Structure probing data (DMS and 2A3) for a 177-nucleotide construct. Conditions: 150 mM KOAc, 10 mM MgCl2 and 150 mM bicine (pH 8.5), 24 C. It was measured as part of the RMDB library TTRINS. Values cover nucleotides 27 to 126.
RNA sequence: GGGAACGACUCGAGUAGAGUCGAAAAGAUAUGGACUGUGAACUACGCUCCCGUAACAGCGUUGAUCGGGUUAGCUCGGAAACGAGCUAACCCGGGAGCUGGAGAAGGGAGCGCACAGUCCUAAGUCGCUAAGUUUUAAGUUCGCUUAAAACUUAGCAAAAGAAACAACAACAACAAC
Reactivity to DMS in 0.01 (KOAc 150mM, MgCl2 10mM, bicine 150mM(pH8.5), 24C), signal-to-noise 1, nucleotides 027 to 126: g020a130u010a300u010g000g000a010c000u000g020u000g020a180a080c140u030a300c090g000c000u000c000c000c010g000u000a140a300c000a000g000c000g000u000u010g000a020u000c000g000g050g000u000u000a010g060c050u000c000g050g030a080a070a210c000g000a070g070c000u010a000a000c000c000c000g000g020g000a030g020c000u000g010g000a070g000a180a260g000g000g000a000g000c000g030c010a000c000a020g010u000c010c010u010a000a090g000u000c060
Reactivity to 2A3 in 0.01 (KOAc 150mM, MgCl2 10mM, bicine 150mM(pH8.5), 24C), signal-to-noise 1, nucleotides 027 to 126: g040a090u190a070u210g020g000a010c000u010g020u020g000a170a110c160u210a050c300g020c000u050c030c000c000g020u020a070a010c010a000g050c020g290u300u000g000a020u020c000g050g070g000u000u030a000g000c080u010c020g000g090a100a130a160c040g010a010g000c020u020a010a010c040c010c000g010g000g010a010g040c000u000g040g000a000g040a050a030g030g000g030a000g000c000g000c000a010c000a000g000u030c000c010u000a000a010g050u030c090
The DMS profile rests on 1,547 reads.